[RMDB]
RNA sequence: GGGAACGACUCGAGUAGAGUCGAAAAAGUUAGGGCGUGGUGUCAAAGGACUUAUUGGUCAUACCCAGCCGCGCCGCCUUGCCGCGCGUACCGUGGCAAAUCGUAUUGCUGAUGAGCUAGACACCUCUAGCCGGACAUAUUUCGAUAUGUCCGGCUAAAAAGAAACAACAACAACAAC
Reactivity to DMS in 0.01 (KOAc 150mM, MgCl2 10mM, bicine 150mM(pH8.5), 24C), signal-to-noise 2, nucleotides 027 to 126: a110g010u000u010a100g050g020g030c000g060u000g000g040u000g010u000c120a060a280a190g000g000a030c020u000u000a130u000u000g030g010u000c060a030u010a100c010c080c040a300g030c000c020g000c020g020c030c000g010c090c050u000u000g000c040c040g010c030g000c210g000u000a090c160c010g050u000g030g020c010a010a010a020u000c160g000u010a100u000u000g010c050u000g000a110u010g000a110g020c040u000a050g000a070c110a070c130c100u000c080
Reactivity to 2A3 in 0.01 (KOAc 150mM, MgCl2 10mM, bicine 150mM(pH8.5), 24C), signal-to-noise 1, nucleotides 027 to 126: a000g220u190u180a100g040g000g120c050g010u010g030g010u000g000u060c080a110a140a100g100g010a030c030u080u150a170u300u300g020g000u020c010a040u090a060c000c010c020a010g060c000c010g000c000g000c010c000g030c000c000u000u050g040c000c030g000c040g060c030g120u100a280c030c020g030u030g020g000c030a000a030a010u060c030g000u080a080u130u140g040c060u040g050a170u020g020a020g000c010u010a020g100a010c080a100c060c030u010c020